Source: RMDB library OK1LIB, as collected in RNAgym. Chemical mapping of a 177-nucleotide RNA with 2A3 and DMS. Values cover nucleotides 27 to 126. The reactions ran in a buffer of 150 mM KOAc, 10 mM MgCl2 and 150 mM bicine (pH 8.5), at 24 C. DMS (dimethyl sulfate) methylates the pairing face of unpaired adenines and cytosines.
RNA sequence: GGGAACGACUCGAGUAGAGUCGAAAAAGGGCUGACUGUGAUGUAGGUAGUCGUUUAUAAAUAAAUAUGUAUCACAGGAUAGAUAGACGACUAGAGUCUAGAAGCCCGAAUACUCGAAAAGAGUUAAGGGUAUUGUAUACUUCGGUAUACAAUACCCAAAAGAAACAACAACAACAAC
Reactivity to 2A3 in 0.01 (KOAc 150mM, MgCl2 10mM, bicine 150mM(pH8.5), 24C), signal-to-noise 3, nucleotides 027 to 126: a000g010g000g000c000u020g020a260c000u030g110u080g110a010u010g110u110a110g230g060u020a030g040u030c000g000u000u040u020a150u080a050a200a030u100a020a050a020u250a090u080g030u060a070u070c050a030c050a200g130g000a000u020a020g070a000u030a020g000a000c010g000a000c020u110a100g050a050g270u000c000u030a020g020a010a000g010c000c030c000g020a000a000u070a020c000u000c010g010a030a220a190a110g030a000g010u030u110a060a070
Reactivity to DMS in 0.01 (KOAc 150mM, MgCl2 10mM, bicine 150mM(pH8.5), 24C), signal-to-noise 3, nucleotides 027 to 126: a100g000g000g000c000u000g000a090c040u010g010u010g000a010u010g010u040a060g020g020u020a020g000u000c020g010u020u000u020a080u020a070a080a060u020a080a040a160u020a110u030g000u000a040u010c040a070c100a050g000g000a130u010a100g020a060u010a000g010a000c000g000a060c140u020a070g000a110g010u000c000u000a040g000a300a090g020c000c000c000g060a070a070u010a010c010u000c000g000a090a080a090a140g000a010g010u000u020a070a160